[RMDB]
RNA sequence: GGGAACGACUCGAGUAGAGUCGAAAAAUUGUGAGCCGAUAUUUAUAUUCAGUUGCUUUAAAUGUGCCAUCUAAAAUAGAUGUUGUUUUUAAUCCGAUUGAGAAAUUGAUUUAUCAACUGAUUGGCACGUUGCGUACUCUUUCGAGAGUACGCAACGAAAAGAAACAACAACAACAAC
Reactivity to DMS in 0.01 (KOAc 150mM, MgCl2 10mM, bicine 150mM(pH8.5), 24C), signal-to-noise 1, nucleotides 027 to 126: a080u000u010g000u000g030a170g000c010c000g000a000u120a030u100u050u030a100u000a070u070u060c120a000g000u000u000g030c110u050u000u000a000a000a020u000g000u000g010c060c000a000u000c080u000a040a020a070a120u000a120g010a050u000g000u000u000g000u070u020u000u000u000a000a140u000c300c000g000a070u000u050g000a070g020a050a000a080u000u000g010a020u020u000u050a090u010c000a010a000c170u040g000a090u010u000g000g020c040a160
Reactivity to 2A3 in 0.01 (KOAc 150mM, MgCl2 10mM, bicine 150mM(pH8.5), 24C), signal-to-noise 1, nucleotides 027 to 126: a000u210u020g100u160g050a100g010c100c040g000a000u000a180u090u300u020a100u080a100u160u000c020a000g000u040u000g000c040u070u000u200a000a030a120u050g050u040g010c010c010a010u020c010u090a000a210a060a090u090a030g000a010u000g000u030u000g000u040u080u000u000u110a000a000u000c030c040g000a080u000u230g010a070g030a020a130a000u000u030g000a030u040u040u040a110u010c000a000a000c000u000g000a000u010u000g000g000c050a000